Annotation: Structure probing data (DMS and 2A3) for a 177-nucleotide construct. 2A3 adducts were read by reverse transcription with SuperScript II with manganese. The RNA was probed in 150 mM KOAc, 10 mM MgCl2 and 150 mM bicine (pH 8.5) at 24 C. Values cover nucleotides 27 to 126. DMS adducts were read by reverse transcription with MarathonRT. The 2A3 profile rests on 3,086 reads.

RNA sequence: GGGAACGACUCGAGUAGAGUCGAAAAGAUAUGGACGAUGACUUGACAUGAACAGUAUCGGAAACGAUACGGGUUCAACAGCAAGCAUCGUCCUAAGUCAAAUCCGCGGCAGUUCGCUGCCGCGGAAUCAUAUCCGGAUGUUCGCAUCCGGAUAUGAAAAAGAAACAACAACAACAAC
Reactivity to DMS in 0.01 (KOAc 150mM, MgCl2 10mM, bicine 150mM(pH8.5), 24C), signal-to-noise 2, nucleotides 027 to 126: g000a010u000a090u010g010g000a000c010g010a000u000g000a210c000u000u000g000a040c060a160u000g000a040a010c000a230g000u000a000u010c010g020g000a060a020a060c000g000a010u000a000c000g010g030g000u000u000c000a030a110c250a190g000c010a000a020g000c000a000u000c000g020u010c000c000u000a000a040g000u000c000a140a160a140u000c000c010g050c030g020g020c000a020g010u000u020c280g010c000u000g000c000c020g000c000g010g000a010a000
Reactivity to 2A3 in 0.01 (KOAc 150mM, MgCl2 10mM, bicine 150mM(pH8.5), 24C), signal-to-noise 2, nucleotides 027 to 126: g010a000u020a000u060g000g000a000c000g000a010u040g240a300c010u010u000g020a070c040a300u140g020a010a000c010a010g020u000a000u000c000g030g000a030a010a010c010g020a000u000a000c020g130g190g010u000u000c080a200a120c180a210g030c000a010a000g000c000a000u000c010g000u030c000c000u000a000a010g010u010c030a020a000a190u000c010c000g010c020g010g000c000a030g000u110u300c300g180c190u000g020c000c000g000c000g000g000a000a010